The record gives the reactivity of an RNA of 177 nucleotides to 2A3 and DMS.
[RMDB]
RNA sequence: GGGAACGACUCGAGUAGAGUCGAAAAUUACCUCCCUUCGGGGAGGUAAACUCAACGCUGCAAGCGGCAGCGCGCUCGCUUGCGCACACACGCACAAUAAAAGCAGUAUGCACUUCGGUGCAUACAAAUAGAAAGAACCAUUCGUGGUUCUUUCUAUAAAAGAAACAACAACAACAAC
Reactivity to 2A3 in 0.01 (KOAc 150mM, MgCl2 10mM, bicine 150mM(pH8.5), 24C), signal-to-noise 4, nucleotides 027 to 126: u040u000a000c000c000u000c010c010c000u010u040c220g040g000g000g000a000g000g010u000a000a000a000c000u000c000a070a060c110g070c090u220g020c010a010a020g020c000g050g020c030a130g270c070g060c060g020c130u130c030g000c020u000u010g000c000g010c010a010c000a000c000a020c060g080c020a060c030a130a220u170a200a130a030a020g040c030a030g000u010a000u010g000c000a010c010u060u080c260g090g000u000g000c000a000u000a000c000a000a020
Reactivity to DMS in 0.01 (KOAc 150mM, MgCl2 10mM, bicine 150mM(pH8.5), 24C), signal-to-noise 5, nucleotides 027 to 126: u000u000a000c000c000u000c000c000c010u000u020c200g040g000g020g010a000g000g000u000a000a010a070c020u000c050a120a090c240g020c030u020g040c010a040a040g020c020g020g010c010a140g010c160g010c210g000c030u000c040g010c020u000u010g020c000g030c020a080c150a070c100a080c100g010c050a060c160a070a070u000a060a060a090a100g020c160a090g000u000a000u000g010c000a010c000u000u000c190g020g010u000g000c000a010u000a000c000a020a080
Reactivities are given for positions 27 through 126. It was measured as part of the RMDB library M2PK50.